[RMDB]
RNA sequence: GGGAACGACUCGAGUAGAGUCGAAAAGAUAUGGAUCACAUGGGAGUCUUCCGACUCGGAAACGAGUCGUCGUGAGGACGAAGAACAUGUGAGUCCUAAGUCAAACACGUAAGUUCGCUUACGUGAACAUAUUUUUUGCGUUCGCGCAAAAAAUAUGAAAAGAAACAACAACAACAAC
Reactivity to DMS in 0.01 (KOAc 150mM, MgCl2 10mM, bicine 150mM(pH8.5), 24C), signal-to-noise 2, nucleotides 027 to 126: g000a040u000a040u010g000g000a190u020c030a000c020a000u010g000g010g010a040g020u010c000u000u000c040c020g010a000c000u010c000g020g010a010a020a030c000g010a010g020u010c000g010u000c290g000u010g010a060g000g010a020c010g000a070a170g010a090a220c010a000u000g000u000g000a010g020u010c000c000u000a000a080g000u000c010a140a100a200c010a000c010g000u000a010a010g010u000u020c200g010c000u000u000a000c000g010u000g000a050a180
Reactivity to 2A3 in 0.01 (KOAc 150mM, MgCl2 10mM, bicine 150mM(pH8.5), 24C), signal-to-noise 1, nucleotides 027 to 126: g010a010u030a010u040g010g000a000u000c030a020c010a000u000g030g010g010a050g000u000c020u100u030c050c010g000a010c000u010c000g020g010a000a030a000c030g000a000g010u000c020g090u110c100g170u300g150a050g060g030a000c030g080a160a000g000a000a000c000a020u030g000u000g010a010g040u030c000c000u020a030a000g020u030c050a000a160a050c010a010c020g010u010a000a010g000u040u210c290g060c240u020u000a010c000g000u030g050a050a010